[RMDB]
RNA sequence: GGGAACGACUCGAGUAGAGUCGAAAAGGUGCGAUGUUCGCAUCGCACCAAAGAAGCUCAAAAUGACGCAAACAACGGCGUCAGCGUGAGCAAACGCGCAAAAAACCACUUGGUUCGCCAAGUGGAACCUCACAGGAGUGUUCGCACUCCUGUGAGGAAAAGAAACAACAACAACAAC
Reactivity to 2A3 in 0.01 (KOAc 150mM, MgCl2 10mM, bicine 150mM(pH8.5), 24C), signal-to-noise 1, nucleotides 027 to 126: g020g000u000g010c000g000a000u010g020u030u070c060g010c080a000u000c000g020c000a010c000c000a000a000a010g010a030a040g000c020u020c000a050a060a000a170u050g000a000c020g000c000a000a150a270c090a140a140c290g060g010c040g000u000c000a010g000c010g060u020g020a030g040c050a010a140a000c110g010c010g000c080a070a000a000a000a000a200c010c000a000c000u000u000g050g000u040u030c270g030c050c000a000a000g010u020g000g010a010a010
Reactivity to DMS in 0.01 (KOAc 150mM, MgCl2 10mM, bicine 150mM(pH8.5), 24C), signal-to-noise 1, nucleotides 027 to 126: g030g010u000g040c000g000a030u000g010u000u020c220g030c000a000u000c000g000c000a000c000c000a030a000a030g000a140a140g020c000u000c020a010a090a030a100u000g000a000c000g000c000a060a170a170c290a070a260c140g000g010c000g000u000c000a000g020c200g000u000g000a000g100c050a020a080a040c220g080c100g000c210a000a020a000a010a060a210c000c000a040c000u000u000g000g000u000u000c190g010c000c000a000a000g010u000g000g000a030a020